[RMDB]
RNA sequence: GGGAACGACUCGAGUAGAGUCGAAAAGUCGUGAACGCGUCACCACGUGGUAUGGAUAACCUGGACUAGUUUCCUUAAUGCUGUCUCGACAAACUCCGAACUAUCUUAAGGCAAGUCUCGGAAGACGGCCCAGACAGUUAUUCGUAACUGUCUGGGCAAAAGAAACAACAACAACAAC
Reactivity to 2A3 in 0.01 (KOAc 150mM, MgCl2 10mM, bicine 150mM(pH8.5), 24C), signal-to-noise 3, nucleotides 027 to 126: g040u030c030g010u000g110a040a040c040g000c000g090u040c020a020c080c000a040c080g050u090g000g030u040a090u130g070g000a100u050a120a060c000c050u080g020g000a000c030u070a040g050u040u100u000c030c000u100u120a080a010u120g010c020u040g030u010c040u020c030g000a020c050a040a060a070c030u000c020c000g000a010a010c060u060a110u180c000u090u200a080a010g110g000c000a000a030g020u020c010u000c180g000g020a030a000g030a060c070g030
Reactivity to DMS in 0.01 (KOAc 150mM, MgCl2 10mM, bicine 150mM(pH8.5), 24C), signal-to-noise 2, nucleotides 027 to 126: g000u000c010g030u000g000a180a030c020g080c100g000u030c010a010c080c010a050c070g000u010g000g020u000a050u070g000g020a080u000a050a050c210c010u000g010g000a140c160u010a140g010u000u000u000c030c000u000u000a130a100u000g000c030u010g010u000c110u020c070g000a050c240a070a140a120c060u000c000c010g010a080a040c000u010a160u020c020u000u040a040a060g000g030c200a060a000g020u010c100u000c070g060g000a100a050g010a070c160g020